RNA sequence: GGGAACGACUCGAGUAGAGUCGAAAAGCUCCGCCCUUCGGGGCGGAGCAAAUACCGAGCUUGUACCUCGGUAGAAGUACGUAACCCUUGGAAACAAGGGAAAAAGGGCCGAGUUCGCUCGGCCCAACCAUACAGUAUAGUUCGCUAUACUGUAUGGAAAAGAAACAACAACAACAAC
Reactivity to DMS in 0.01 (KOAc 150mM, MgCl2 10mM, bicine 150mM(pH8.5), 24C), signal-to-noise 4, nucleotides 027 to 126: g020c010u010c000c020g030c000c010c000u000u010c240g040g010g050g040c020g000g000a000g020c000a000a020a070u000a010c000c000g000a010g010c030u000u020g000u010a110c300c010u000c000g010g000u000a000g000a110a130g010u010a060c150g010u010a090a080c000c010c000u000u000g000g000a140a080a140c010a010a020g000g010g000a000a010a020a130a170g000g010g010c000c000g020a030g020u000u010c210g000c000u000c000g000g000c000c010c000a000a000
Reactivity to 2A3 in 0.01 (KOAc 150mM, MgCl2 10mM, bicine 150mM(pH8.5), 24C), signal-to-noise 2, nucleotides 027 to 126: g010c020u010c000c010g030c030c000c010u020u050c260g020g030g020g030c000g000g000a000g000c000a000a010a000u000a000c000c000g010a000g010c030u110u100g050u170a090c000c010u000c010g000g000u000a010g010a060a030g120u160a050c100g040u050a080a150c000c000c000u010u000g010g000a000a050a030c010a010a010g000g040g030a050a000a000a020a080g010g000g000c010c010g010a010g010u020u070c140g010c040u010c010g010g000c000c000c010a000a000
Structure probing data (DMS and 2A3) for a 177-nucleotide construct.
Values are in units of 0.01, from 0 to 300, in steps of 10.
For DMS, 6,002 sequencing reads were counted.